[RMDB]
The record gives the reactivity of an RNA of 177 nucleotides to 2A3 and DMS.
DMS adducts were read by reverse transcription with MarathonRT.
In probing experiments dimethyl sulfate is read out at A N1 and C N3, which are open when not base-paired.
Source: RMDB libraries RFM100 and RFMREP, as collected in RNAgym.

RNA sequence: GGGAACGACUCGAGUAGAGUCGAAAAAACGGCGAUAUUGUACUUUCAUUAUCCCUACUUCUUAAUCUCUGAAAGUAUGUAUAUAAAAAUAAUGAAAGUGAAUGAGGGCCAAAAAAAUGAGUAGUUCACCAUUCAUUCUUUUCGAAGAAUGAAUGGUAAAAGAAACAACAACAACAAC
Reactivity to 2A3 in 0.01 (KOAc 150mM, MgCl2 10mM, bicine 150mM(pH8.5), 24C), signal-to-noise 3, nucleotides 027 to 126: a000a000c130g000g010c060g040a080u040a020u160u090g120u090a000c000u000u010u000c000a000u000u000a040u080c030c020c010u000a010c010u020u050c010u070u090a230a300u120c120u000c050u130g060a110a000a010g000u030a030u120g000u000a070u020a010u120a280a090a000a090a000u020a010a000u000g000a000a000a010g000u010g010a010a040u060g040a090g070g270g000c000c000a010a060a000a010a000a030a140u160g010a010g090u120a020g020u010u040c010
Reactivity to DMS in 0.01 (KOAc 150mM, MgCl2 10mM, bicine 150mM(pH8.5), 24C), signal-to-noise 3, nucleotides 027 to 126: a130a060c230g030g010c000g010a130u020a060u000u000g020u050a040c000u010u000u000c000a000u000u000a010u000c070c070c050u000a010c010u000u000c030u020u020a160a120u030c100u060c090u010g010a080a030a010g010u020a000u020g000u010a060u020a140u050a020a060a070a040a020u000a010a010u000g000a010a000a010g010u010g010a040a010u000g010a160g040g000g000c000c000a000a010a000a090a020a110a130u040g000a140g000u010a090g010u000u000c040